[RMDB]
RNA sequence: GGGAACGACUCGAGUAGAGUCGAAAAGAUAUGGACCGAUGUCGGAGCGAUGAAACUCUUCGGAAACGAAGAGUGGAGUUUCCGAUUUCGAUCGGUCCUAAGUCAAACAAGUGCUUCGGCACUUGAAUCUCAAUUACGUCUUCGGACGUAAUUGAGAAAAAGAAACAACAACAACAAC
Reactivity to 2A3 in 0.01 (KOAc 150mM, MgCl2 10mM, bicine 150mM(pH8.5), 24C), signal-to-noise 1, nucleotides 027 to 126: g000a020u040a030u160g010g010a000c020c000g000a020u040g020u020c010g020g020a050g040c300g140a180u060g000a040a000a020c000u000c000u000u000c010g000g030a050a040a040c000g000a000a000g020a000g030u030g020g000a030g030u080u190u050c000c000g020a000u000u070u060c080g070a010u050c000g010g000u000c000c010u020a010a050g060u000c000a080a060a060c010a030a000g000u010g000c010u100u230c300g210g000c020a000c000u000u010g010a040a040
Reactivity to DMS in 0.01 (KOAc 150mM, MgCl2 10mM, bicine 150mM(pH8.5), 24C), signal-to-noise 2, nucleotides 027 to 126: g000a020u000a300u020g000g010a000c000c010g020a050u010g000u000c000g010g010a050g010c080g010a020u010g040a300a190a050c000u000c000u000u000c010g010g000a050a110a190c010g010a000a010g030a010g000u010g000g000a260g010u000u000u010c000c000g000a010u000u000u010c240g010a010u000c010g010g000u010c000c010u000a030a050g010u010c050a090a210a180c030a020a020g010u000g000c000u000u040c220g040g020c000a000c000u010u000g000a080a150

The data come from the RNA Mapping Database (RMDB), library TTRDEL. This 177-nucleotide RNA was probed chemically with 2A3 and DMS. For 2A3 the reverse transcriptase was SuperScript II with manganese. DMS adducts were read by reverse transcription with MarathonRT.